[RMDB]
RNA sequence: GGGAACGACUCGAGUAGAGUCGAAAAGAAAAACGCCAAAAAGCAUUUAAAGUAUGCGGUCUAGGCGGGCAUGUUACCAUGCAAAGUUAUCGACAAUAACUUAGACCAAGUACGUAAGUACAAAAAACGAUACAGUGAGAUUCGUCUCACUGUAUCGAAAAGAAACAACAACAACAAC
Reactivity to DMS in 0.01 (KOAc 150mM, MgCl2 10mM, bicine 150mM(pH8.5), 24C), signal-to-noise 3, nucleotides 027 to 126: g010a030a020a050a100a090c020g030c010c030a070a030a020a040a020g040c020a010u000u000u000a080a130a190g010u000a020u000g020c040g020g000u000c020u000a070g020g010c000g000g000g010c000a010u000g010u010u000a130c260c010a010u000g000c000a040a020a010g010u000u000a010u000c140g020a110c290a110a090u010a000a010c010u000u010a070g000a010c010c000a010a140g000u000a010c010g010u010a100a100g010u010a000c010a000a060a060a030a020a100
Reactivity to 2A3 in 0.01 (KOAc 150mM, MgCl2 10mM, bicine 150mM(pH8.5), 24C), signal-to-noise 2, nucleotides 027 to 126: g110a000a100a020a030a010c010g000c000c000a020a010a000a000a010g010c010a030u000u060u280a090a060a030g070u060a030u030g020c000g020g010u000c020u050a100g000g020c000g010g010g000c010a010u010g010u110u130a080c160c020a010u010g000c000a020a010a020g000u000u000a030u040c100g140a050c100a110a030u020a020a010c000u010u020a000g000a020c010c000a060a050g010u010a000c000g010u060a050a110g000u000a010c000a020a140a010a010a010a010
This 177-nucleotide RNA was probed chemically with DMS and 2A3. Reactivities are given for positions 27 through 126. Conditions: 150 mM KOAc, 10 mM MgCl2 and 150 mM bicine (pH 8.5), 24 C. For DMS the reverse transcriptase was MarathonRT. For 2A3 the reverse transcriptase was SuperScript II with manganese.